[RMDB]
RNA sequence: GGGAACGACUCGAGUAGAGUCGAAAAGUGUCGAUCGUCGUCUAUAGGCCGGACGUGCGACAACUGACACGCACGCUUUCCAGUCUGCUCGUCGCGCUCGAGAAGCUCGACGGCAGCCGGCCGGGCAUAGUCGACCACUAUUCGUAGUGGUCGACUAAAAAGAAACAACAACAACAAC
Reactivity to 2A3 in 0.01 (KOAc 150mM, MgCl2 10mM, bicine 150mM(pH8.5), 24C), signal-to-noise 1, nucleotides 027 to 126: g030u010g020u010c000g060a130u050c020g090u010c000g000u000c030u090a140u050a160g030g000c000c010g000g050a030c110g030u050g000c000g050a060c020a050a030c050u140g020a020c000a000c020g020c000a030c040g080c020u020u090u070c080c020a020g050u020c020u040g000c030u060c160g000u020c000g000c000g000c010u000c020g300a290g090a250a000g000c010u000c000g000a000c000g000g000c020a000g000c000c000g030g020c000c000g000g000g050c040a040
Reactivity to DMS in 0.01 (KOAc 150mM, MgCl2 10mM, bicine 150mM(pH8.5), 24C), signal-to-noise 2, nucleotides 027 to 126: g030u000g000u000c010g000a110u000c100g020u010c010g030u000c060u010a120u000a090g020g010c020c010g030g020a160c170g010u000g030c000g010a090c050a080a110c160u030g010a030c080a080c010g020c120a090c100g020c240u000u010u020c040c030a140g000u010c020u010g010c020u010c020g010u000c000g000c180g010c030u000c030g010a160g010a110a090g000c000u010c000g000a000c000g000g000c060a010g000c030c010g010g000c010c010g030g020g040c080a200